The record gives the reactivity of an RNA of 177 nucleotides to DMS and 2A3. The data come from the RNA Mapping Database (RMDB), library OK2TST. For 2A3, 958 sequencing reads were counted. For DMS the reverse transcriptase was MarathonRT. The reactions ran in a buffer of 150 mM KOAc, 10 mM MgCl2 and 150 mM bicine (pH 8.5), at 24 C. For DMS, 1,724 sequencing reads were counted. Reactivities are given for positions 27 through 126.
RNA sequence: GGGAACGACUCGAGUAGAGUCGAAAACGUGCUGUUGGUGGCAUCCACUUGUUUGCUGUAAUUAAAACGGUAGCUUAAGCCCCGCUCGUCCUGCUGAGUAUCAAAAUGGCUACUGGCCCAGGUGACAGUGGUAACAUCGAUUCGUCGAUGUUACCACAAAAGAAACAACAACAACAAC
Reactivity to DMS in 0.01 (KOAc 150mM, MgCl2 10mM, bicine 150mM(pH8.5), 24C), signal-to-noise 2, nucleotides 027 to 126: c100g010u000g000c020u000g020u010u000g010g030u000g000g000c040a090u000c070c050a070c060u010u000g010u000u000u000g010c040u000g020u000a120a090u000u010a070a070a110a130c090g010g010u000a020g030c020u000u010a050a150g000c040c020c020c080g000c030u000c030g030u000c040c030u000g030c050u000g000a100g000u010a100u020c110a060a020a060a090u010g010g000c020u020a050c040u000g000g000c030c020c020a140g010g020u000g000a080c090a150
Reactivity to 2A3 in 0.01 (KOAc 150mM, MgCl2 10mM, bicine 150mM(pH8.5), 24C), signal-to-noise 1, nucleotides 027 to 126: c020g050u110g000c010u030g000u250u040g080g060u070g010g070c020a060u040c020c020a090c080u170u160g080u090u120u100g030c020u020g010u130a160a050u040u110a030a250a040a000c000g010g040u010a020g090c010u000u150a100a020g010c000c000c000c000g050c010u050c000g110u000c030c010u010g010c030u020g030a040g050u110a010u150c070a000a020a140a030u100g000g010c000u050a020c010u060g070g000c010c000c000a020g000g000u120g030a040c070a060